[RMDB]
Structure probing data (2A3) for a 177-nucleotide construct. It was measured as part of the RMDB library RFM100. The reactions ran in a buffer of 150 mM KOAc, 10 mM MgCl2 and 150 mM bicine (pH 8.5), at 24 C. For 2A3, 355 sequencing reads were counted.
RNA sequence: GGGAACGACUCGAGUAGAGUCGAAAAACGGCCAUUACGAUGGCCGAUUCGGGUGUUUCAUUACAGUAGUGUAUUACAAUACAAAGUAUGAACUUUGCAUUGUAAUACACUGUUAUAUUACUUGAAAGUCGUACUGUUGAUUCGUCAACAGUACGACAAAAGAAACAACAACAACAAC
Reactivity to 2A3 in 0.01 (KOAc 150mM, MgCl2 10mM, bicine 150mM(pH8.5), 24C), signal-to-noise 1, nucleotides 027 to 126: a000c000g000g000c010c000a000u100u100a020c270g040a010u000g000g080c110c000g000a000u000u070c010g090g180g000u010g100u040u000u000c210a220u260u120a200c020a150g300u250a020g000u080g000u000a000u000u000a000c050a000a000u000a020c000a000a060a000g030u040a110u300g210a300a190c000u000u000u000g000c000a000u000u030g000u000a000a000u000a010c000a000c000u000g000u090u000a040u000a000u000u070a160c120u040u020g240a150a010a000